[RMDB]
RNA sequence: GGGAACGACUCGAGUAGAGUCGAAAAACUCGGGCCCGUACUGCGAUCGGUGCCGGGGCGGGGUCGAGCCCACGAGCCGACUGCCGGAGGUGGCCGUCGCGGUGUGUUUCCUCACGGACCGCAGGAAGUAGAAACGAACAUUCGUGUUCGUUUCUACAAAAGAAACAACAACAACAAC
Reactivity to DMS in 0.01 (KOAc 150mM, MgCl2 10mM, bicine 150mM(pH8.5), 24C), signal-to-noise 3, nucleotides 027 to 126: a160c030u000c020g020g000g040c040c000c030g010u000a020c010u000g010c010g020a030u010c040g030g010u000g000c040c010g010g020g010g020c010g010g000g000g000u010c010g000a120g010c020c030c120a120c300g020a200g010c020c010g000a020c010u000g010c010c000g010g020a260g000g000u000g010g020c000c010g010u000c030g000c000g000g000u000g000u010g010u010u000u000c010c020u010c060a070c020g010g000a040c020c030g020c130a110g010g010a090a130
Reactivity to 2A3 in 0.01 (KOAc 150mM, MgCl2 10mM, bicine 150mM(pH8.5), 24C), signal-to-noise 2, nucleotides 027 to 126: a000c030u020c000g010g040g000c000c000c040g000u030a040c010u010g050c010g100a120u220c070g100g000u050g000c010c020g040g070g060g060c030g010g110g020g020u020c010g010a100g030c000c000c000a060c080g020a050g050c010c010g030a040c030u130g130c060c000g060g130a090g020g050u060g160g020c000c000g000u010c000g000c000g000g000u020g000u010g000u020u060u020c000c010u050c020a030c030g010g020a020c000c010g010c050a040g070g080a150a030
Chemical mapping of a 177-nucleotide RNA with DMS and 2A3.
For DMS, 3,283 sequencing reads were counted.
The RNA was probed in 150 mM KOAc, 10 mM MgCl2 and 150 mM bicine (pH 8.5) at 24 C.
2A3 adducts were read by reverse transcription with SuperScript II with manganese.